This 177-nucleotide RNA was probed chemically with DMS and 2A3. For DMS, 3,795 sequencing reads were counted. Values cover nucleotides 27 to 126. It was measured as part of the RMDB library OK1LIB. The reactions ran in a buffer of 150 mM KOAc, 10 mM MgCl2 and 150 mM bicine (pH 8.5), at 24 C.

RNA sequence: GGGAACGACUCGAGUAGAGUCGAAAAGUGCGGCUGCUGGCCUGGCAGGGUGCUGCGCUGGCCGCGAUCCCGCUACUGCGCGGCAUCCGCGACAACGACCGUGCGCUGAUCGCGGUGGGCAUCGCCGAUCACUUUGGCGAUUCGUCGCCAAAGUGAUAAAAGAAACAACAACAACAAC
Reactivity to DMS in 0.01 (KOAc 150mM, MgCl2 10mM, bicine 150mM(pH8.5), 24C), signal-to-noise 2, nucleotides 027 to 126: g010u030g030c010g000g010c010u010g030c060u020g010g000c040c040u000g000g000c090a080g000g000g020u020g000c000u020g020c000g010c000u000g010g040c040c080g070c040g000a120u020c010c050c000g020c080u040a090c120u000g000c030g000c010g030g050c060a050u000c000c000g020c040g000a100c090a100a240c020g000a070c030c050g020u000g010c040g000c060u000g010a060u020c000g010c010g020g020u000g020g000g020c110a150u020c050g030c040c090g010
Reactivity to 2A3 in 0.01 (KOAc 150mM, MgCl2 10mM, bicine 150mM(pH8.5), 24C), signal-to-noise 4, nucleotides 027 to 126: g130u070g020c020g010g000c020u070g000c050u070g050g020c000c000u030g060g020c090a120g030g000g010u040g010c010u030g000c050g010c060u090g080g050c030c020g020c020g000a030u060c060c050c000g000c010u120a090c070u060g030c000g010c000g000g010c020a020u010c000c020g020c000g040a070c020a130a010c020g070a050c000c020g060u040g000c050g040c050u090g030a130u090c010g010c010g090g000u080g030g050g000c030a090u110c040g030c020c010g010